An RNA of 177 nucleotides, treated with DMS and 2A3 and read out base by base. The data come from the RNA Mapping Database (RMDB), library OK2TST.

[RMDB]
RNA sequence: GGGAACGACUCGAGUAGAGUCGAAAAUAGGGGAUAUUUCUAGUGGUGCUCAGCAAGAUAUUUCUCAAGCUACGAAAUUAGUUCGUAGUAUGGUCUGCGAGUGGGGAAUGAGUGAGCAAUUAGGUACAUCCUACCUCUCAUUCGUGAGAGGUAGGAUAAAAGAAACAACAACAACAAC
Reactivity to DMS in 0.01 (KOAc 150mM, MgCl2 10mM, bicine 150mM(pH8.5), 24C), signal-to-noise 3, nucleotides 027 to 126: u020a150g020g010g000g010a100u010a040u000u000u020c110u010a130g000u000g000g010u000g020c020u000c010a140g020c040a080a070g010a050u010a070u010u010u000c130u020c080a060a300g000c020u000a010c000g010a000a030a260u000u030a120g000u000u000c000g040u000a010g010u000a040u000g020g010u000c050u000g000c060g000a090g020u000g000g010g010g000a110a070u010g020a110g020u000g000a070g010c100a040a050u000u000a040g020g000u020a060c160
Reactivity to 2A3 in 0.01 (KOAc 150mM, MgCl2 10mM, bicine 150mM(pH8.5), 24C), signal-to-noise 1, nucleotides 027 to 126: u120a020g000g000g000g000a000u000a100u130u280u050c040u040a030g060u000g070g040u080g020c000u000c030a000g050c000a090a060g010a100u070a100u080u180u030c090u000c010a050a000g000c000u000a000c000g040a030a030a060u190u060a120g180u070u020c000g000u000a000g010u010a070u060g000g040u020c030u050g070c000g050a010g030u060g000g000g000g000a100a090u080g020a020g060u050g010a000g030c000a000a070u140u060a100g010g070u030a020c020